[RMDB]
RNA sequence: GGGAACGACUCGAGUAGAGUCGAAAACACACUUGAGUGAUUUACACAACUCAGAUAUCUGGCUUCUGUUGGAGAUUCAAUUGCUCAGCAGGAAGCAAAGCAUGCUCAAUCUAAACACUCAGACAGCUAGAUUAGGUGCUUUCGAGCACCUAAUCUAAAAAGAAACAACAACAACAAC
Reactivity to 2A3 in 0.01 (KOAc 150mM, MgCl2 10mM, bicine 150mM(pH8.5), 24C), signal-to-noise 2, nucleotides 027 to 126: c070a000c010a020c040u060u080g000a000g060u020g080a250u120u100u170a030c130a010c010a060a170c010u030c060a000g030a070u090a090u000c020u030g130g000c010u000u010c020u010g120u160u030g090g050a020g010a030u170u190c090a130a180u200u220g000c010u000c010a010g000c000a050g000g230a020a000g000c050a030a160a000g050c020a020u070g000c010u020c070a080a090u000c020u060a160a070a000c010a000c000u010c010a030g040a130c030a010g000c040
Reactivity to DMS in 0.01 (KOAc 150mM, MgCl2 10mM, bicine 150mM(pH8.5), 24C), signal-to-noise 2, nucleotides 027 to 126: c050a110c180a140c120u010u000g010a060g000u010g000a220u000u000u020a060c200a060c130a070a090c090u010c170a030g020a130u000a030u000c060u000g010g000c020u000u000c020u000g000u000u000g020g020a020g010a020u010u030c160a100a070u000u000g000c000u000c010a080g010c000a060g020g000a020a060g020c000a040a020a040g000c300a030u000g000c040u000c050a060a070u020c140u000a020a040a030c030a010c030u000c030a030g010a130c090a030g030c170